An RNA of 207 nucleotides, treated with DMS and 2A3 and read out base by base. 2A3 is a SHAPE reagent: it acylates the 2'-hydroxyl of flexible nucleotides of all four kinds. For 2A3, 3,075 sequencing reads were counted. For DMS the reverse transcriptase was MarathonRT.
RNA sequence: GGGAACGACUCGAGUAGAGUCGAAAAGGAAGACGGAGACAGAACAAGCAAAGGAGGGCCCUGGGCACAGAGGUCUGUGUGUGUAGCCAUCUAAGCCACUGGACCCCAGCAGACGAGCACCUAAGCUCAGGCUUAACCCAGUGCACGUGUGCGCACACAGGUGCAUACUAUUCGUAGUAUGCACCUGAAAAGAAACAACAACAACAAC
Reactivity to DMS in 0.01 (KOAc 150mM, MgCl2 10mM, bicine 150mM(pH8.5), 24C), signal-to-noise 2, nucleotides 027 to 156: g010g030a070a050g020a060c070g000g020a060g030a090c050a100g020a190a130c070a090a060g020c050a060a060a090g020g090a090g000g020g000c070c010c040u000g040g000g030c050a100c030a120g010a080g020g000u000c010u010g010u010g020u000g030u000g020u000a120g030c070c020a080u000c060u000a110a170g000c050c010a070c000u000g020g000a080c040c050c040c040a170g020c080a070g000a170c060g000a050g020c000a070c070c070u000a120a110g000c000u000c050a090g010g000c050u010u000a070a110c070c000c070a090g010u000g020c010a080c110g000u000g010u000g000c010g000c030a030c080a220
Reactivity to 2A3 in 0.01 (KOAc 150mM, MgCl2 10mM, bicine 150mM(pH8.5), 24C), signal-to-noise 4, nucleotides 027 to 156: g050g010a020a050g030a030c070g000g020a030g010a030c060a060g050a100a030c050a110a010g080c060a070a100a070g050g010a040g020g010g000c040c020c010u050g000g030g030c050a040c020a070g060a040g030g040u030c020u030g060u010g010u010g000u000g040u070a090g020c010c000a050u080c070u160a090a040g040c060c010a010c010u030g050g020a090c000c030c020c010a000g010c020a020g040a170c070g010a010g000c010a040c120c100u080a090a020g000c000u010c030a020g000g100c000u030u060a050a040c000c000c040a000g000u000g000c050a040c110g050u090g010u040g000c010g000c030a010c000a000
Background:
The reactions ran in a buffer of 150 mM KOAc, 10 mM MgCl2 and 150 mM bicine (pH 8.5), at 24 C.